[RMDB]
RNA sequence: GGGAACGACUCGAGUAGAGUCGAAAAGUGAAAGCUCCUUCUCUCGCAAUGUGUAACUCAUGACUCUCAUGACCCCUGGUUGGAGAGAUCCGGACUAGGAGCCAGGGGGCCUCUGAUUCUGCCAGCCAAAACUGUCGUAAGUUCGCUUACGACAGAAGGACUCGUAUUUGUUCGCAAAUACGAGUCCAAAAGAAACAACAACAACAAC
Reactivity to 2A3 in 0.01 (KOAc 150mM, MgCl2 10mM, bicine 150mM(pH8.5), 24C), signal-to-noise 1, nucleotides 027 to 156: g100u060g040a220a020a020g000c010u030c000c040u040u040c010u000c010u030c010g110c100a010a090u140g040u030g070u090a090a050c000u000c020a040u080g100a040c010u020c000u010c140a060u100g050a100c010c000c000c110u010g000g040u000u120g040g020a070g050a010g010a100u000c040c090g080g060a080c060u050a040g000g040a010g000c010c000a000g000g000g000g010g000c010c010u000c040u020g020a050u050u000c030u090g040c000c040a080g030c000c000a070a060a040a060c010u040g000u000c000g010u010a000a050g010u020u100c280g000c100u000u000a060c000g000a000c000a000g000a000a000